About this RNA:
Chemical mapping of a 207-nucleotide RNA with 2A3. The reactions ran in a buffer of 150 mM KOAc, 10 mM MgCl2 and 150 mM bicine (pH 8.5), at 24 C.
RNA sequence: GGGAACGACUCGAGUAGAGUCGAAAAGUUAUGACUUCGGUCAUAACAAAAAAACCUUUGUGUAAGUAUGGGGAGAAAUUAUGGACCCAUUGGGUCCAGAAUUUCGAAGAACCUAAGCUUACACUCUGGUAAAAACUAGAAUGUUCGCAUUCUAGAACCUUAGUAUGACCUUCGGGUCAUACUAAGGAAAAGAAACAACAACAACAAC
Reactivity to 2A3 in 0.01 (KOAc 150mM, MgCl2 10mM, bicine 150mM(pH8.5), 24C), signal-to-noise 2, nucleotides 027 to 156: g010u000u000a000u010g010a000c010u020u090c300g060g010u000c000a000u010a010a000c000a070a050a020a000a000a000a000c020c000u000u000u010g000u000g000u010a000a020g020u000a090u300g010g000g020g000a050g000a000a000a010u020u060a030u030g010g000a010c030c010c080a150u090u250g030g000g000u020c000c000a000g000a010a010u000u000u000c020g050a070a020g000a000a000c000c000u030a180a100g010c000u000u000a000c000a010c000u000c010u000g010g010u060a140a190a010a000a010c000u000a000g000a000a000u020g050u130u150c300g010c110a000u000u000c000u020a000g000a030a000
It was measured as part of the RMDB library RNAMAK.
For 2A3, 1,362 sequencing reads were counted.
Reactivities are given for positions 27 through 156.